[RMDB]
This 177-nucleotide RNA was probed chemically with 2A3. The 2A3 profile rests on 490 reads. The data come from the RNA Mapping Database (RMDB), library OK1LIB. For 2A3 the reverse transcriptase was SuperScript II with manganese.

RNA sequence: GGGAACGACUCGAGUAGAGUCGAAAAGCCUCGACGGCGAUCGGGCGACGAUGUCCGGGAAGCCUCCGGUGGCGAUCCUGUCGACCAGAUCGGCGCGGCGCAUAUCGGAGCCGUGGAUCAGCUCGCGGCAGGCUCCUCUAUUCGUAGAGGAGCCUGCAAAAGAAACAACAACAACAAC
Reactivity to 2A3 in 0.01 (KOAc 150mM, MgCl2 10mM, bicine 150mM(pH8.5), 24C), signal-to-noise 1, nucleotides 027 to 126: g010c050c000u000c020g060a070c000g090g020c050g010a020u110c000g040g010g070c000g000a110c140g080a260u230g000u000c000c000g010g080g040a000a000g030c000c000u060c010c010g020g000u080g050g000c000g000a040u000c000c080u090g000u000c030g000a090c020c000a100g030a260u040c050g030g050c000g020c010g000g040c060g020c140a100u140a090u150c160g040g030a080g000c040c040g010u010g000g000a060u020c000a080g000c030u000c000g000c000g020